[RMDB]
RNA sequence: GGGAACGACUCGAGUAGAGUCGAAAACGCUUACUGCAUGAUUUGCGCGCUGUUAACGCCAAGCUUGUUCCUUUUGGGGCCGUCCAACAGGGGGCGCCAGUUCUCUCCGCGCUCCCGCGUGGCUGGCUAGAAUAAUCUUGUUCGCAAGAUUAUUCUAAAAAGAAACAACAACAACAAC
Reactivity to 2A3 in 0.01 (KOAc 150mM, MgCl2 10mM, bicine 150mM(pH8.5), 24C), signal-to-noise 9, nucleotides 027 to 126: c040g020c040u090u150a080c040u110g050c030a070u090g050a200u120u060u160g050c040g000c000g000c030u060g040u200u100a080a020c020g000c010c020a040a040g030c070u050u050g000u030u040c000c000u050u040u050u080g110g010g020g000c010c000g040u050c010c000a050a060c030a100g000g000g000g010g000c000g000c010c000a030g020u140u030c080u020c010u020c070c020g000c000g000c000u000c030c010c010g000c050g000u010g010g000c030u030g010g000c000
Reactivity to DMS in 0.01 (KOAc 150mM, MgCl2 10mM, bicine 150mM(pH8.5), 24C), signal-to-noise 9, nucleotides 027 to 126: c110g010c050u000u010a070c080u010g000c040a060u010g010a100u000u010u000g010c050g010c060g010c030u000g010u010u010a080a140c090g000c020c060a050a090g010c090u000u000g000u000u000c020c010u000u010u010u010g010g020g010g010c010c010g010u000c000c010a060a070c100a250g000g000g000g010g010c020g000c000c150a100g010u010u010c090u010c030u000c180c220g000c000g010c000u000c010c010c010g000c160g010u000g000g000c020u010g010g010c030